RNA sequence: GGGAACGACUCGAGUAGAGUCGAAAAUAGCUGGUUCAUCAUUGCCAUCGAUAGUACAUCAAUACGUUUAUCUGCACCUUCUUUUCCUACUGCAGCUGCUCUUAAAAUCUGACGGUUUGAAGUGUCAUACCUGUACCCCGUUCGCGGGGUACAGGUAAAAAGAAACAACAACAACAAC
Reactivity to DMS in 0.01 (KOAc 150mM, MgCl2 10mM, bicine 150mM(pH8.5), 24C), signal-to-noise 1, nucleotides 027 to 126: u000a060g010c010u010g020g000u000u000c020a060u080c180a050u030u000g070c010c010a040u000c060g000a120u000a040g050u000a020c060a050u020c190a050a100u000a190c010g020u000u040u000a060u000c070u000g000c030a060c020c000u000u010c140u000u000u000u000c080c000u000a060c070u000g020c000a050g060c000u000g210c010u000c000u000u000a080a030a050a030u000c050u000g010a090c020g020g010u040u030u000g030a110a010g000u000g030u040c040a060
Reactivity to 2A3 in 0.01 (KOAc 150mM, MgCl2 10mM, bicine 150mM(pH8.5), 24C), signal-to-noise 2, nucleotides 027 to 126: u120a000g000c020u020g040g000u100u010c040a140u040c020a050u040u140g050c060c000a040u060c040g040a020u070a030g030u060a050c050a150u080c060a020a120u060a200c130g020u010u110u130a110u030c010u090g000c000a050c020c000u010u000c090u030u050u030u030c000c000u000a090c030u010g000c020a000g010c010u080g020c040u030c010u100u110a070a170a010a100u010c030u040g020a050c050g030g130u050u090u000g140a150a040g050u000g000u160c060a050